[RMDB]
RNA sequence: GGGAACGACUCGAGUAGAGUCGAAAAAGUGUCUCGGACAGCGGUUCGAUUCCGCUCAGCUCCAUUCCCCCGACCCACCGCCCCGCCGGCGGUGCGUCAUCCCGGGGCUGCAAUGGUUUCGACGGGGCUACGAACCUUAGUUCGCUAAGGUUCGUAGAAAAGAAACAACAACAACAAC
Reactivity to DMS in 0.01 (KOAc 150mM, MgCl2 10mM, bicine 150mM(pH8.5), 24C), signal-to-noise 2, nucleotides 027 to 126: a090g020u020g010u000c000u010c060g010g010a080c120a010g030c040g010g010u000u010c060g000a300u010u000c020c010g000c030u010c000a010g010c010u010c000c020a300u010u020c030c000c000c100c130g010a010c030c030c000a000c010c020g010c010c000c110c300g020c240c180g030g010c030g020g000u000g010c200g000u000c000a100u000c040c030c050g020g000g020g000c050u010g020c150a080a050u000g020g020u000u000u000c020g010a100c000g000g020g000g040